[RMDB]
An RNA of 207 nucleotides, treated with 2A3 and DMS and read out base by base. Source: RMDB library OK3TST, as collected in RNAgym. Reactivities are given for positions 27 through 156. The 2A3 profile rests on 1,028 reads. Conditions: 150 mM KOAc, 10 mM MgCl2 and 150 mM bicine (pH 8.5), 24 C. Reactivities are rounded to 0.1 and cut off at 0 and 3. 2A3 adducts were read by reverse transcription with SuperScript II with manganese.
RNA sequence: GGGAACGACUCGAGUAGAGUCGAAAACGACUACUGGCCCUUGGUCGCUUUUAAAAGAGGAUAUCUGUCCCUCUCCCUUCUGAGUUCGUUGGAAAUGAGGAAGAGAGAGAGAGAGAGAGGUGGCCAGAGAGAGCGGGGGCGAAGCUGAAGGGACGAAACCCUGAUGGGGUUUCGACCCCAUCAGGGUAAAAGAAACAACAACAACAAC
Reactivity to 2A3 in 0.01 (KOAc 150mM, MgCl2 10mM, bicine 150mM(pH8.5), 24C), signal-to-noise 1, nucleotides 027 to 156: c010g020a020c000u060a020c010u050g040g010c010c010c080u040u060g030g000u010c010g050c110u080u100u100u270a060a150a020a020g080a030g040g010a010u040a050u100c020u080g210u030c000c010c000u000c000u000c000c010c000u000u010c010u000g030a020g010u010u060c040g090u230u240g090g050a050a050a070u060g000a000g030g000a000a010g010a010g020a000g010a000g000a000g020a010g000a000g000a000g010a010g000g060u070g040g000c000c000a000g000a010g010a000g000a000g000c060g000g000g000g000g050c070g020a030a020g000c000u020g050a100a010g050g040g120a010c000g060a130a250
Reactivity to DMS in 0.01 (KOAc 150mM, MgCl2 10mM, bicine 150mM(pH8.5), 24C), signal-to-noise 1, nucleotides 027 to 156: c020g050a100c030u000a110c100u020g010g010c050c030c050u010u000g000g050u010c030g010c070u000u000u010u010a070a050a150a040g010a120g000g000a170u000a130u030c010u010g020u000c010c010c000u000c000u000c010c000c000u000u010c000u000g000a300g010u010u000c030g030u030u000g060g020a070a050a060u000g000a300g000g000a040a060g010a010g000a010g000a030g020a040g010a020g000a030g000a030g040a140g020g020u020g030g010c000c010a050g000a100g000a090g000a110g040c020g030g020g000g020g050c060g020a010a100g030c030u000g030a100a090g000g000g000a160c010g020a110a120